An RNA of 207 nucleotides, treated with 2A3 and read out base by base.
The 2A3 profile rests on 786 reads.
For 2A3 the reverse transcriptase was SuperScript II with manganese.
The reactions ran in a buffer of 150 mM KOAc, 10 mM MgCl2 and 150 mM bicine (pH 8.5), at 24 C.
[RMDB]
RNA sequence: GGGAACGACUCGAGUAGAGUCGAAAAAACGCGAUUCAACCUUAAUAGGAUAUGCUAAACACUGCCGUUUGAAGUCUGUUUAGAAGAAACUUAAUCAAGCUAGCAUCAUGUUGGUUGUUUAUCACUUUUCAUGAUGCGAAACCUUUCGAUAAACUACGAAGCAGGUAACGUUCGCGUUACCUGCUUCAAAAGAAACAACAACAACAAC
Reactivity to 2A3 in 0.01 (KOAc 150mM, MgCl2 10mM, bicine 150mM(pH8.5), 24C), signal-to-noise 2, nucleotides 027 to 156: a000a000c160g060c050g120a080u200u170c050a070a080c010c010u110u160a120a100u140a300g020g000a030u020a010u130g010c010u000a010a000a000c000a000c000u000g000c000c040g050u010u000u030g000a000a000g010u030c010u010g000u030u000u000a000g020a040a010g020a070a120a040c080u120u100a000a010u020c030a000a000g000c010u010a000g010c000a000u000c000a000u000g000u030u030g060g000u000u000g010u000u000u000a000u000c000a000c000u140u120u050u020c000a000u000g000a000u010g010c010g000a000a000a000c060c050u140u270u160c070g000a000u000a000a000a000c000u030a020c070